[RMDB]
Structure probing data (2A3 and DMS) for a 170-nucleotide construct. For 2A3, 2,482 sequencing reads were counted. The RNA was probed in 150 mM KOAc, 10 mM MgCl2 and 150 mM bicine (pH 8.5) at 24 C.
RNA sequence: GGGAACGACUCGAGUAGAGUCGAAAAUUGCGUGUUGUUGGUCAUGCCAUGCAAGGCACUCUUUUGAAGUUGACUGUCGAUGUUGCUAACCCUAGCACUCCAGCCUACACUUUUACAACAGUGAAACAAGCAGAGGUGUUCGCACCUCUGAAAAGAAACAACAACAACAAC
Reactivity to 2A3 in 0.01 (KOAc 150mM, MgCl2 10mM, bicine 150mM(pH8.5), 24C), signal-to-noise 2, nucleotides 027 to 129: u150u060g100c140g050u040g040u000u030g030u000u010g000g070u020c060a050u060g000c060c000a020u080g050c130a060a150g000g000c000a020c000u000c020u020u030u020u010g070a040a040g000u070u000g070a060c000u000g000u020c030g020a090u080g060u090u000g070c010u000a130a150c000c020c100u000a010g020c000a000c010u000c080c020a080g000c000c000u020a000c040a020c000u110u000u130u280a040c060a080a000c010a160g020u000g000a000a210a000c070a070a000g040
Reactivity to DMS in 0.01 (KOAc 150mM, MgCl2 10mM, bicine 150mM(pH8.5), 24C), signal-to-noise 2, nucleotides 027 to 129: u000u000g040c100g060u030g000u020u020g020u220u000g030g000u060c130a020u000g040c070c040a090u040g020c140a100a100g020g060c010a110c110u000c030u030u000u070u010g020a090a040g000u000u040g020a080c080u050g030u010c100g060a060u050g000u050u130g000c000u000a000a150c150c120c140u020a110g000c050a050c000u020c060c050a100g000c030c070u030a050c090a010c070u000u030u080u090a000c210a050a080c150a070g030u050g030a060a020a000c100a090a100g040